[RMDB]
RNA sequence: GGGAACGACUCGAGUAGAGUCGAAAACUCGAAAGAGACCUGCAUAUCUUAGGCAGAUGAACAAGUCACGUCUGAAAAGCGAAAGCCCUAAGAUAUGCAGCUGUGAAGACUUGACGCAGAAAAUAAAAGUAUUUAGCAGUUUCGACUGCUAAAUACUAAAAGAAACAACAACAACAAC
Reactivity to 2A3 in 0.01 (KOAc 150mM, MgCl2 10mM, bicine 150mM(pH8.5), 24C), signal-to-noise 7, nucleotides 027 to 126: c000u010c000g030a030a050a010g070a010g040a070c000c010u000g000c000a000u000a000u010c000u000u000a000g000g020c000a000g000a010u000g000a080a020c010a010a000g010u000c010a010c080g010u000c000u010g100a220a230a110a000g030c020g060a060a030a010g000c000c000c000u000a000a000g000a000u000a000u000g000c000a000g000c000u000g000u010g030a100a030g010a010c000u010u010g010a020c010g000c020a010g080a070a100a010a010u300a030a100a030
Reactivity to DMS in 0.01 (KOAc 150mM, MgCl2 10mM, bicine 150mM(pH8.5), 24C), signal-to-noise 4, nucleotides 027 to 126: c010u020c020g000a100a120a090g000a040g000a160c230c040u010g000c010a000u000a000u010c000u020u000a010g010g040c030a000g000a020u020g030a080a080c030a020a000g010u020c000a300c030g040u000c000u010g010a170a040a090a190g000c000g000a080a100a130g000c020c020c010u000a010a000g010a000u000a010u000g000c000a000g000c020u000g000u000g000a060a070g000a000c000u000u000g000a300c010g000c020a030g000a180a050a080a110u060a050a100a080